An RNA of 207 nucleotides, treated with 2A3 and read out base by base.
RNA sequence: GGGAACGACUCGAGUAGAGUCGAAAAACUUCUGCGGCCGAGCACAGGAAAGGAAGAACUAAGAAACAAGGCAGUUUCAGGCAGAGAGGCCCUUCUGUUAAAACUCAAAGGAAGACUGGCAUGAAAAUGGUUUCUGAUCUGCGGAGGAAACUCCUAACUAAAUUAGUAGCUUCGGCUACUAAUUUAGAAAAGAAACAACAACAACAAC
Reactivity to 2A3 in 0.01 (KOAc 150mM, MgCl2 10mM, bicine 150mM(pH8.5), 24C), signal-to-noise 1, nucleotides 027 to 156: a000c080u160u130c060u070g070c020g040g050c040c070g060a000g030c030a000c020a030g000g080a120a080a050g010g020a010a070g010a060a000c070u140a160a040g040a110a030a020c060a020a000g100g000c010a000g000u050u080u040c080a050g010g000c040a000g010a040g020a040g050g020c040c030c000u050u000c000u040g090u030u140a030a130a050a030c060u060c140a060a040a020g040g000a000a000g050a100c140u060g020g050c010a000u070g120a000a060a010a080u070g040g000u000u060u020c000u020g040a020u040c020u150g000c000g040g000a000g010g000a010a030a030c000u010c040c010u020a050a030
2A3 adducts were read by reverse transcription with SuperScript II with manganese. Source: RMDB library OK3TST, as collected in RNAgym.